[RMDB]
RNA sequence: GGGAACGACUCGAGUAGAGUCGAAAACGCAUGCGAAAGCAUGCGGCUAUGCUAAUGCAUGGCGAGGGGUAACAACGCGCGAUUCCCCCGUAUGUGGUUAUUAUUCCGCAUACGAUUACCAGUGUCUGUUAUUAUUCAGAUACAUGGACCGCGCGAAGCGAUCAGUAGUCUUCGGACUACUGAUCGCAAAAGAAACAACAACAACAAC
Reactivity to 2A3 in 0.01 (KOAc 150mM, MgCl2 10mM, bicine 150mM(pH8.5), 24C), signal-to-noise 5, nucleotides 027 to 156: c010g010c010a000u010g010c000g060a070a000a030g010c000a000u000g010c020g000g010c000u000a000u000g000c010u180a300a040u300g000c010a000u000g000g030c050g040a080g020g010g000g010u070a090a040c120a050a050c080g000c000g000c000g020a040u090u110c010c000c010c000c000g000u000a000u000g010u010g030g060u020u070a130u210u060a160u290u020c000c010g000c000a000u000a000c000g000a020u010u070a050c000c000a000g010u000g000u000c000u000g110u090u070a250u190u070a140u160u180c000a000g000a000u000a000c010a040u010g000g010a040c050c020g000c000g000c000g000a020a010
Reactivity to DMS in 0.01 (KOAc 150mM, MgCl2 10mM, bicine 150mM(pH8.5), 24C), signal-to-noise 2, nucleotides 027 to 156: c030g000c000a010u000g000c010g040a160a150a260g010c000a020u010g000c000g040g010c040u000a010u030g020c000u000a100a110u010g040c020a010u000g050g020c040g010a120g010g000g010g020u000a090a140c050a070a130c020g000c010g050c020g030a230u000u000c010c020c020c030c000g010u000a000u000g020u010g000g010u000u020a170u010u000a300u000u000c000c000g010c000a030u000a000c000g020a090u000u000a110c060c010a120g000u010g000u000c000u000g010u000u000a150u010u000a220u010u000c000a000g000a070u000a010c020a120u000g010g020a090c070c020g030c000g020c000g030a050a150